[RMDB]
Structure probing data (2A3 and DMS) for a 177-nucleotide construct. For DMS, 4,722 sequencing reads were counted.
RNA sequence: GGGAACGACUCGAGUAGAGUCGAAAAGUCAUUGCUGGUUCGCCAGCAAUGACAAAACUCCGACGAAGGAUAAGAAUAAGACCUUAAUUCUCGGAGAAAGUGCUAACAUAGUUCGCUAUGUUAGCACCUUAAGUAAAUCCUUCGGGAUUUACUUAAGAAAAGAAACAACAACAACAAC
Reactivity to 2A3 in 0.01 (KOAc 150mM, MgCl2 10mM, bicine 150mM(pH8.5), 24C), signal-to-noise 4, nucleotides 027 to 126: g000u000c000a010u010u010g010c010u010g030g050u050u080c140g050c050c000a000g000c010a010a010u000g000a000c000a010a000a000a000c000u000c010c000g030a040c170g020a030a010g080g080a100u050a160a040g060a110a110u180a150a060g080a110c000c000u030u010a040a030u030u010c010u000c010g010g000a010g030a090a090a000g000u010g000c000u000a000a000c000a000u010a010g030u030u050c260g000c110u000a000u000g000u000u000a000g020c000a000c000
Reactivity to DMS in 0.01 (KOAc 150mM, MgCl2 10mM, bicine 150mM(pH8.5), 24C), signal-to-noise 4, nucleotides 027 to 126: g000u000c010a000u000u000g010c010u000g000g010u010u010c260g010c020c000a000g010c010a010a000u010g000a010c010a020a040a110a130c010u000c000c000g010a030c220g010a020a010g000g000a200u020a040a040g010a070a080u000a110a070g000a200c140c000u000u000a040a100u010u000c000u000c000g010g000a010g020a060a080a120g010u000g010c000u000a010a000c000a010u000a000g000u000u020c290g010c000u000a010u000g000u000u000a000g000c000a000c000
The RNA was probed in 150 mM KOAc, 10 mM MgCl2 and 150 mM bicine (pH 8.5) at 24 C.
Source: RMDB library RFMREP, as collected in RNAgym.